Description: Structure probing data (DMS and 2A3) for a 177-nucleotide construct. DMS adducts were read by reverse transcription with MarathonRT. For 2A3, 1,750 sequencing reads were counted.

RNA sequence: GGGAACGACUCGAGUAGAGUCGAAAAGAUAUGGACGUGGAAGGCUUUUGACGGAGCCGUAUCGGAAACGAUACGACUCCGAUAAGCCUUCACGUCCUAAGUCAAAAUCGAGGCUUCGGCCUCGAAAUCGUAUCCGAUACUUCGGUAUCGGAUACGAAAAAGAAACAACAACAACAAC
Reactivity to DMS in 0.01 (KOAc 150mM, MgCl2 10mM, bicine 150mM(pH8.5), 24C), signal-to-noise 1, nucleotides 027 to 126: g000a030u010a300u030g010g000a020c010g020u010g000g040a050a010g000g020c000u020u020u010u050g010a220c140g020g000a000g010c000c000g000u000a000u010c000g000g000a110a070a130c000g040a030u000a000c000g000a010c000u000c000c000g000a010u000a020a050g000c010c020u000u000c020a000c000g010u000c000c000u020a000a050g000u010c000a060a050a080a090u000c010g000a020g010g000c010u010u000c300g060g020c000c000u000c010g000a000a030a090
Reactivity to 2A3 in 0.01 (KOAc 150mM, MgCl2 10mM, bicine 150mM(pH8.5), 24C), signal-to-noise 1, nucleotides 027 to 126: g040a030u090a040u140g000g010a030c020g040u110g220g240a120a110g050g030c100u090u140u260u300g300a190c010g040g000a010g050c000c000g000u000a010u010c000g000g010a040a060a000c000g000a000u000a000c000g020a000c000u000c000c000g000a020u010a000a000g000c000c020u010u010c000a000c010g000u000c000c000u000a020a010g030u000c020a070a000a030a260u060c000g010a010g020g050c040u080u080c300g170g030c000c000u020c000g000a000a000a000